Structure probing data (2A3 and DMS) for a 177-nucleotide construct. Conditions: 150 mM KOAc, 10 mM MgCl2 and 150 mM bicine (pH 8.5), 24 C. For DMS the reverse transcriptase was MarathonRT.

[RMDB]
RNA sequence: GGGAACGACUCGAGUAGAGUCGAAAACGGAGGCUGAUAUUCAUAUCGCCAGCCAGUUGAUGGACCGAAUGAAUCUUCAUGGCGCUUCCCGUACUGCGGCGCAAAAUGCGUUCCGGGUGGGAAAAUCCUUCGUAUCCAGUUUCGACUGGAUACGAAGAAAAGAAACAACAACAACAAC
Reactivity to 2A3 in 0.01 (KOAc 150mM, MgCl2 10mM, bicine 150mM(pH8.5), 24C), signal-to-noise 2, nucleotides 027 to 126: c030g110g010a050g100g000c020u080g000a030u000a010u140u030c050a050u140a150u080c000g010c040c010a040g030c000c010a020g100u140u200g120a120u040g020g010a000c040c010g040a040a050u080g030a040a020u020c100u050u030c040a100u070g050g060c040g000c080u060u000c050c020c020g000u060a180c030u070g020c050g010g000c010g000c000a070a280a160a250u140g030c000g000u090u080c020c000g040g030g040u080g000g030g000a000a010a000a090u080c000
Reactivity to DMS in 0.01 (KOAc 150mM, MgCl2 10mM, bicine 150mM(pH8.5), 24C), signal-to-noise 2, nucleotides 027 to 126: c120g000g000a110g020g020c020u000g020a020u000a010u000u000c080a050u000a200u000c000g030c090c170a170g000c000c070a060g020u010u010g030a100u000g010g000a120c300c010g010a050a020u020g010a040a020u000c100u000u000c020a050u000g020g010c060g030c180u000u000c000c000c000g030u000a270c050u000g010c220g000g000c030g020c010a080a090a090a150u000g010c010g000u000u010c090c010g000g000g000u000g030g000g000a020a030a120a110u010c070